[RMDB]
RNA sequence: GGGAACGACUCGAGUAGAGUCGAAAAUCAUCAGGGAAAUGAAAAUAAAAACCACAAUGAGAUAUCACCUUAUACCAGGUAGAAUGGCUACUAUAAAAAAAUGAAGUGUCAUCAAGGAUAUAGAGAAACGUACUUUAGCAUUCGUGCUAAAGUACGUAAAAGAAACAACAACAACAAC
Reactivity to DMS in 0.01 (KOAc 150mM, MgCl2 10mM, bicine 150mM(pH8.5), 24C), signal-to-noise 2, nucleotides 027 to 126: u000c010a060u000c060a130g020g000g000a090a110a070u000g000a080a130a100a170u000a040a070a220a150a120c000c020a090c170a040a040u020g010a090g000a060u000a080u010c030a120c030c060u000u000a010u000a090c080c030a090g000g000u000a040g010a130a080u020g010g020c040u030a010c090u030a010u000a000a020a060a080a160a090a090u010g000a010a040g000u000g000u000c010a070u000c070a110a070g000g010a070u000a060u000a040g020a240g000a080a050
Reactivity to 2A3 in 0.01 (KOAc 150mM, MgCl2 10mM, bicine 150mM(pH8.5), 24C), signal-to-noise 2, nucleotides 027 to 126: u020c010a000u060c100a020g070g020g040a070a060a060u090g060a060a040a140a020u210a040a190a060a030a010c000c000a020c020a030a050u090g020a050g010a120u040a040u050c030a040c040c000u020u020a050u070a090c060c010a020g000g050u020a020g040a120a070u030g000g050c040u060a020c040u010a030u300a210a060a030a020a000a000a030u170g050a100a030g030u000g000u000c000a000u000c020a050a060g050g050a010u030a000u020a120g080a020g090a170a140